Structure probing data (DMS) for a 177-nucleotide construct. For DMS the reverse transcriptase was MarathonRT. In probing experiments dimethyl sulfate is read out at A N1 and C N3, which are open when not base-paired.
RNA sequence: GGGAACGACUCGAGUAGAGUCGAAAAGCCUUCCUCGAACACGCCAUAGGUGGACGGAUAGGUAAUCAUGAAGGCGGCGAGAUUAUCGCGAUGCUUUUCCGCCUUGGCCUUGAGAUCAUCAAUAUCAUAAAUGACCUGGGUUCGCCCAGGUCAUUUAAAAAGAAACAACAACAACAAC
Reactivity to DMS in 0.01 (KOAc 150mM, MgCl2 10mM, bicine 150mM(pH8.5), 24C), signal-to-noise 1, nucleotides 027 to 126: g000c010c050u010u000c040c000u020c030g000a070a070c130a130c300g000c020c000a030u030a020g000g000u000g020g020a050c300g000g030a150u020a040g000g000u000a040a040u020c050a100u000g010a070a040g030g010c000g000g020c080g010a030g000a110u000u010a030u000c010g030c080g020a080u000g010c070u020u000u000u000c010c020g000c030c020u010u000g000g000c000c160u000u010g010a100g010a090u000c040a090u000c140a040a100u020a130u000c100a120